This 177-nucleotide RNA was probed chemically with 2A3 and DMS. The 2A3 profile rests on 2,176 reads. Reactivities are given for positions 27 through 126. For DMS the reverse transcriptase was MarathonRT. The data come from the RNA Mapping Database (RMDB), libraries RFM100 and RFMREP. Conditions: 150 mM KOAc, 10 mM MgCl2 and 150 mM bicine (pH 8.5), 24 C.
RNA sequence: GGGAACGACUCGAGUAGAGUCGAAAAAGUGCACCUCACUGCCCUCCCGCUUCCCCGGCCACUUGGCACUCACUACCCCCUCCCCUUCCCUUCUCCCCCGUACCCCCCCCCUCUCUUUCUCGCAUCCUACAUACUAUUCUUUCGAGAAUAGUAUGUAAAAAGAAACAACAACAACAAC
Reactivity to 2A3 in 0.01 (KOAc 150mM, MgCl2 10mM, bicine 150mM(pH8.5), 24C), signal-to-noise 1, nucleotides 027 to 126: a010g090u080g010c030a030c000c010u030c020a040c030u020g010c020c000c000u010c000c000c010g000c040u020u010c020c000c010c030g010g020c010c010a040c070u060u050g030g000c020a010c040u040c010a050c010u050a010c020c000c000c000c000u000c000c000c020c000u010u010c010c010c000u040u000c020u010c000c020c000c000c000g020u020a020c000c000c000c000c000c020c010c000c000u000c010u000c000u010u110u000c020u010c010g020c020a030u020c000c000
Reactivity to DMS in 0.01 (KOAc 150mM, MgCl2 10mM, bicine 150mM(pH8.5), 24C), signal-to-noise 1, nucleotides 027 to 126: a070g000u000g000c060a080c060c060u000c140a100c040u010g010c030c030c030u000c020c030c000g050c100u000u010c030c020c010c100g010g030c010c040a060c040u020u010g010g020c010a070c030u000c060a060c080u000a090c120c000c040c030c160u000c010c010c040c040u010u010c000c030c010u000u000c080u010c000c060c040c000c020g000u020a140c050c030c010c000c130c030c000c040c000u000c040u010c000u020u000u000c020u000c010g020c090a060u000c110c030